[RMDB]
Record summary: Chemical mapping of a 177-nucleotide RNA with 2A3 and DMS. For DMS, 1,738 sequencing reads were counted. The reactions ran in a buffer of 150 mM KOAc, 10 mM MgCl2 and 150 mM bicine (pH 8.5), at 24 C. For 2A3 the reverse transcriptase was SuperScript II with manganese. For DMS the reverse transcriptase was MarathonRT.
RNA sequence: GGGAACGACUCGAGUAGAGUCGAAAAGAGGUAGCCCGCCCAGCUUGCCUCUUCCCCAGAUAUCAACAGGGUCUUUGUGGCUUCCUGAAGGCUGUGGCUGGAAAAAGAGGGAGGAGCUGGGGAGGGUAUGGUCUAGCUUAUUCGUAAGCUAGACCAUAAAAGAAACAACAACAACAAC
Reactivity to 2A3 in 0.01 (KOAc 150mM, MgCl2 10mM, bicine 150mM(pH8.5), 24C), signal-to-noise 1, nucleotides 027 to 126: g070a010g000g090u070a030g000c000c000c000g080c010c000c000a000g000c000u020u030g070c020c000u000c030u040u070c020c000c000c020a020g040a080u130a010u160c060a020a080c000a020g010g040g070u040c060u070u070u170g230u150g030g000c070u230u110c050c020u060g050a080a040g030g030c040u060g040u040g300g000c040u060g030g000a080a040a020a000a020g040a010g060g100g000a300g130g010a040g000c020u050g000g020g020g010a180g000g030g000u120
Reactivity to DMS in 0.01 (KOAc 150mM, MgCl2 10mM, bicine 150mM(pH8.5), 24C), signal-to-noise 2, nucleotides 027 to 126: g010a070g000g010u000a180g020c010c010c020g010c000c000c010a070g000c000u010u000g010c000c010u000c000u000u000c140c300c000c020a020g000a120u010a070u010c110a130a160c050a020g010g000g010u000c020u000u000u010g010u000g020g020c200u000u020c020c010u000g010a070a100g010g010c040u000g000u000g000g000c040u000g000g000a040a160a060a030a010g000a070g000g000g010a090g000g010a040g000c000u000g000g010g020g000a020g040g000g020u010